[RMDB]
RNA sequence: GGGAACGACUCGAGUAGAGUCGAAAAUGGUACAACCCGACCAGCAAGGAAAUCUGCCUUGUGGAACUGUGGUAUCGCCGCUGGGUGCAGGUCCACGUCCUGAAGUCGCCCGAUGGCCGCGUGGUCGAUGUCAUGUUAUGUUCGCAUAACAUGACAUAAAAGAAACAACAACAACAAC
Reactivity to 2A3 in 0.01 (KOAc 150mM, MgCl2 10mM, bicine 150mM(pH8.5), 24C), signal-to-noise 4, nucleotides 027 to 126: u090g030g030u090a060c020a070a050c030c000c000g000a010c010c010a020g100c010a040a030g030g020a080a070a190u130c080u180g150c000c010u030u030g020u050g010g030a060a040c060u110g020u060g080g040u070a040u150c060g030c060c000g010c090u110g060g000g010u080g010c030a020g050g000u020c010c020a040c050g060u030c010c000u040g050a060a020g100u070c040g020c020c000c010g040a100u150g010g000c020c010g030c050g080u110g010g030u000c050g020
Reactivity to DMS in 0.01 (KOAc 150mM, MgCl2 10mM, bicine 150mM(pH8.5), 24C), signal-to-noise 6, nucleotides 027 to 126: u000g010g010u000a060c110a120a120c020c040c030g010a130c010c010a120g020c020a040a030g010g000a070a100a100u010c200u010g010c010c010u000u000g010u000g000g000a050a050c090u010g020u000g010g010u000a060u000c070g010c030c030g010c080u000g010g020g010u000g000c060a050g000g000u000c040c070a080c090g010u010c020c020u000g000a100a090g010u000c090g010c040c020c050g000a090u000g000g000c010c040g010c140g010u000g000g010u000c050g010